[RMDB]
RNA sequence: GGGAACGACUCGAGUAGAGUCGAAAAGAAGAGAAGUGAGUAAACGCCUAUUCGGUAUAAGCACAGCCCGUCAAAAGGCGUGCGGCGAGGGCACCAGAAGCUGUGCUUAUAACUGGGCCCUCGAAGAACGCGUACUAAUAUUCGUAUUAGUACGCGUAAAAGAAACAACAACAACAAC
Reactivity to DMS in 0.01 (KOAc 150mM, MgCl2 10mM, bicine 150mM(pH8.5), 24C), signal-to-noise 9, nucleotides 027 to 126: g010a090a070g010a070g020a080a080g010u010g000a100g000u020a050a080a050c030g010c010c010u010a110u020u020c040g010g010u010a060u020a040a050g010c000a010c000a050g020c000c010c000g000u020c300a060a080a110a080g000g010c000g020u000g010c140g010g010c020g010a010g010g000g010c000a090c010c000a010g010a230a100g000c010u010g010u010g010c010u000u010a080u030a080a180c010u000g000g000g000c000c000c000u000c000g010a050a050g010a120
Reactivity to 2A3 in 0.01 (KOAc 150mM, MgCl2 10mM, bicine 150mM(pH8.5), 24C), signal-to-noise 9, nucleotides 027 to 126: g110a030a010g110a000g030a150a020g100u120g100a030g020u130a080a150a030c010g010c000c000u100a180u130u220c030g010g010u080a100u030a160a010g000c000a000c010a020g000c010c000c000g060u100c080a090a060a020a010g010g000c010g000u010g010c020g020g010c020g000a000g010g020g000c200a300c070c000a010g020a050a010g000c050u060g030u050g050c000u110u060a160u070a150a060c000u000g000g000g000c000c000c000u000c000g000a000a000g020a010